[RMDB]
Chemical mapping of a 177-nucleotide RNA with 2A3 and DMS.
Reactivities are rounded to 0.1 and cut off at 0 and 3.
DMS adducts were read by reverse transcription with MarathonRT.
It was measured as part of the RMDB library OK1LIB.
2A3 adducts were read by reverse transcription with SuperScript II with manganese.
Conditions: 150 mM KOAc, 10 mM MgCl2 and 150 mM bicine (pH 8.5), 24 C.
RNA sequence: GGGAACGACUCGAGUAGAGUCGAAAAUUAGGGCUGGCGAUCAAUAUCCCGGAUACAGUGCAAAUGUCCAGUUCCGUGUACCAUAUAGUGACUCAAGCAAUAUCAUUAAUGGACACAGCUGUCACAACUCUUAUAUUAGGUUCGCCUAAUAUAAGAGAAAAGAAACAACAACAACAAC
Reactivity to 2A3 in 0.01 (KOAc 150mM, MgCl2 10mM, bicine 150mM(pH8.5), 24C), signal-to-noise 9, nucleotides 027 to 126: u120u060a080g030g000g000c010u010g010g020c050g080a070u070c070a080a060u070a080u160c010c010c000g000g000a060u100a050c040a020g050u040g120c030a030a060a110u140g020u020c010c000a000g010u090u100c030c020g000u020g010u060a300c000c010a040u260a010u020a080g020u010g010a020c020u060c230a120a080g050c070a140a140u070a040u200c010a010u010u050a030a010u030g010g000a010c000a000c000a030g020c020u030g040u120c040a040c020a100a150
Reactivity to DMS in 0.01 (KOAc 150mM, MgCl2 10mM, bicine 150mM(pH8.5), 24C), signal-to-noise 8, nucleotides 027 to 126: u020u050a100g000g010g010c020u010g010g000c040g020a070u020c060a070a090u020a180u000c010c010c000g010g020a080u030a070c090a060g010u020g010c160a070a110a070u030g020u020c030c010a030g010u000u020c050c050g020u000g000u000a130c000c010a010u000a080u000a020g010u000g020a030c290u020c190a100a140g000c180a090a090u030a230u010c020a020u000u010a030a040u000g000g000a060c030a020c020a100g010c050u010g010u020c100a060c120a100a130

Notes: The DMS profile rests on 20,387 reads. For 2A3, 29,411 sequencing reads were counted.